[RMDB]
RNA sequence: GGGAACGACUCGAGUAGAGUCGAAAAGGAUUUAUCGAUGACGUGAGUUAUUACGCCAGCGAUGCGGCUGAUCUGGCGCCGAAACUGCUGCCGAAGUUGGAAACUUGGCGCGACAUUGCAAAGUCCCCAUAGUGGUGAGCUUCGGCUCACCACUAUGAAAAGAAACAACAACAACAAC
Reactivity to 2A3 in 0.01 (KOAc 150mM, MgCl2 10mM, bicine 150mM(pH8.5), 24C), signal-to-noise 1, nucleotides 027 to 126: g050g000a010u090u060u120a170u220c000g010a010u020g010a020c030g050u100g020a030g010u190u080a070u140u100a080c030g000c000c000a010g020c000g030a000u060g030c020g030g000c030u050g030a160u110c060u080g030g020c020g010c030c010g020a020a060a030c030u070g000c000u050g030c020c030g060a010a000g030u040u110g100g140a030a060a090c020u000u030g060g040c000g020c040g000a000c010a050u060u000g000c000a010a060a060g060u020c000c000c000
Reactivity to DMS in 0.01 (KOAc 150mM, MgCl2 10mM, bicine 150mM(pH8.5), 24C), signal-to-noise 2, nucleotides 027 to 126: g030g000a110u000u000u000a060u010c040g000a040u000g010a040c020g000u000g020a050g020u010u010a120u000u000a040c030g020c020c010a010g030c040g020a040u010g010c080g010g020c050u010g000a070u020c050u000g000g000c060g010c010c050g020a090a060a080c060u000g000c060u000g000c040c030g010a040a050g000u000u000g010g020a080a120a110c080u000u010g000g020c000g000c050g020a050c110a060u010u000g010c100a080a080a170g000u000c010c000c050